RNA sequence: GGGAACGACUCGAGUAGAGUCGAAAAGAUAUGGAUCGAUGUGUGAGCGAAGAACUAUCUCGGAAACGAGAUAGGGAGCUCCACAGCGAUCCUAAGUCAAAAGAGGAGAUACUUCGGUAUCUCCUCAUCUCCAUUAUUGCUUCGGCAAUAAUGGAGAAAAAGAAACAACAACAACAAC
Reactivity to 2A3 in 0.01 (KOAc 150mM, MgCl2 10mM, bicine 150mM(pH8.5), 24C), signal-to-noise 1, nucleotides 027 to 126: g050a020u100a030u170g020g000a000u000c020g000a000u000g020u030g150u300g030a000g000c020g160a300a020g030a070a040c010u000a010u010c020u000c010g010g040a050a100a040c000g000a000g000a010u000a000g000g000g010a010g000c020u000c000c000a000c000a020g000c000g000a000u000c000c000u000a010a010g030u000c030a000a060a070a160g000a010g050g000a010g020a020u020a000c010u050u160c300g110g020u020a000u000c000u000c000c040u000c010a000
Reactivity to DMS in 0.01 (KOAc 150mM, MgCl2 10mM, bicine 150mM(pH8.5), 24C), signal-to-noise 2, nucleotides 027 to 126: g000a030u000a300u010g000g000a000u000c000g010a040u020g040u000g000u020g010a010g010c020g000a110a210g030a110a220c010u000a000u010c000u000c000g010g020a100a140a260c000g010a010g000a020u000a000g000g000g000a120g000c000u000c000c010a000c040a000g000c030g020a000u000c000c000u000a000a010g000u020c020a090a080a150a130g000a000g020g000a010g000a040u000a000c000u000u010c230g050g000u000a000u000c000u000c000c000u000c000a000
Overview
The record gives the reactivity of an RNA of 177 nucleotides to 2A3 and DMS. For DMS the reverse transcriptase was MarathonRT. Values cover nucleotides 27 to 126. The DMS profile rests on 1,862 reads. The 2A3 profile rests on 3,086 reads. It was measured as part of the RMDB library TTRDES.